[RMDB]
RNA sequence: GGGAACGACUCGAGUAGAGUCGAAAAAUGCCUAGGGGGUGUGAGAGCAUGGCCCCCACCACUGGGACUGAGACACUGCCCAGACACCUGCGGGUGGCUGCAGUCGAGAAUCUUCCGCAAUGGGCGACUUAUACACCAUUUUCGAAUGGUGUAUAAGAAAAGAAACAACAACAACAAC
Reactivity to 2A3 in 0.01 (KOAc 150mM, MgCl2 10mM, bicine 150mM(pH8.5), 24C), signal-to-noise 9, nucleotides 027 to 126: a000u120g040c010c030u090a120g010g010g000g020g000u060g010u070g070a250g010a020g120c050a080u090g080g020c000c000c020c000c000a010c000c010a030c020u060g010g010g050a040c060u060g040a030g010a060c030a010c060u040g010c020c040c000a000g010a010c010a020c000c010u050g010c180g070g010g000u010g010g000c010u020g000c010a020g020u080c060g020a010g020a140a090u010c020u050u020c010c010g080c080a030a070u060g010g020g010c010g010a010
Reactivity to DMS in 0.01 (KOAc 150mM, MgCl2 10mM, bicine 150mM(pH8.5), 24C), signal-to-noise 9, nucleotides 027 to 126: a150u030g010c000c010u000a090g020g000g010g000g020u000g020u020g000a160g010a130g010c050a070u010g020g000c020c010c000c010c010a040c050c050a080c080u010g000g000g000a040c110u000g000a090g000a150c150a060c030u000g010c060c140c070a030g010a090c040a020c020c010u000g030c110g010g010g030u010g000g000c020u000g000c030a040g000u000c070g010a090g000a100a130u010c060u010u000c010c010g000c070a060a060u010g000g000g000c060g000a200